RNA sequence: GGGAACGACUCGAGUAGAGUCGAAAAGAUAUGGAUCUGAUCGGGAGAACACGCGAGAGUCGGAAACGACUCUCGUUCGAAGAACGAGUCAGAUCCUAAGUCAAAGUGUCUAGUUCGCUAGACACAACUCGAACGGAAUGUUCGCAUUCCGUUCGAGAAAAGAAACAACAACAACAAC
Reactivity to DMS in 0.01 (KOAc 150mM, MgCl2 10mM, bicine 150mM(pH8.5), 24C), signal-to-noise 1, nucleotides 027 to 126: g000a030u000a140u000g000g000a000u010c000u000g010a050u010c000g020g010g010a140g000a100a120c200a150c060g040c030g000a010g020a020g030u000c000g000g010a050a010a060c010g000a020c000u000c000u000c000g000u000u000c090g000a080a040g000a210a170c000g010a040g000u010c000a020g000a000u000c000c000u000a000a010g010u000c060a130a110a160g000u000g000u000c000u000a000g010u030u020c300g070c020u000a000g000a040c000a000c000a090a090
Reactivity to 2A3 in 0.01 (KOAc 150mM, MgCl2 10mM, bicine 150mM(pH8.5), 24C), signal-to-noise 1, nucleotides 027 to 126: g000a010u010a020u050g000g000a030u000c000u000g020a000u050c000g010g100g030a190g090a160a160c080a040c270g030c020g020a020g010a000g000u000c000g000g030a000a000a000c020g020a000c020u040c010u010c000g010u000u000c000g040a050a130g130a140a030c040g020a000g300u060c000a000g010a010u020c010c000u000a000a000g020u000c040a070a060a120g010u010g000u000c000u000a000g020u050u080c300g000c140u000a010g020a000c000a000c000a000a030